[RMDB]
RNA sequence: GGGAACGACUCGAGUAGAGUCGAAAAAGGCGUUUCGACGCCUGGCCGUCCUAAGUCCAGACAUGACGCUGACAGUCGCAACAGCUAUCGGAAACGAUAGACAUGCGACUGGAGGCGUCAACAGCUGGAUAUGGAGUAUAACUUAGUUCGCUAAGAAAUUGAACGACUUAUUCGUAAGUCGUUCAAUAAAAGAAACAACAACAACAAC
Reactivity to DMS in 0.01 (KOAc 150mM, MgCl2 10mM, bicine 150mM(pH8.5), 24C), signal-to-noise 4, nucleotides 027 to 156: a020g020g000c010g030u000u000u000c160g030a060c010g020c010c000u000g000g020c040c020g040u020c020c010u010a080a180g010u000c010c000a040g010a070c050a300u010g020a010c010g010c000u000g000a300c000a010g010u010c010g000c000a030a100c110a240g020c010u000a010u000c000g000g000a230a150a300c020g020a020u000a010g000a030c060a300u000g030c000g000a040c000u010g010g010a300g000g000c000g000u000c010a020a030c040a150g000c020u010g010g020a030u000a210u010g020g000a150g020u010a100u010a060a060c060u010u000a050g000u000u000c160g040c030u010a030a060g000a090a220
Reactivity to 2A3 in 0.01 (KOAc 150mM, MgCl2 10mM, bicine 150mM(pH8.5), 24C), signal-to-noise 3, nucleotides 027 to 156: a000g040g010c050g000u090u110u150c240g090a030c000g010c000c000u000g020g080c000c020g100u040c000c000u060a150a040g020u000c000c010a000g020a080c040a300u100g000a000c020g000c000u040g000a020c010a000g000u010c010g000c020a020a060c040a200g000c000u000a010u020c010g010g080a130a020a040c020g000a000u000a000g030a030c000a040u050g000c010g000a000c000u000g000g000a000g000g000c000g000u000c000a000a000c000a000g000c000u010g000g010a020u000a030u050g000g000a020g060u190a100u040a300a020c010u020u020a010g010u080u060c170g090c270u040a010a000g130a080a290
The data come from the RNA Mapping Database (RMDB), library RNAMAK.
This 207-nucleotide RNA was probed chemically with DMS and 2A3.
For 2A3, 2,901 sequencing reads were counted.
The DMS profile rests on 7,449 reads.
The reactions ran in a buffer of 150 mM KOAc, 10 mM MgCl2 and 150 mM bicine (pH 8.5), at 24 C.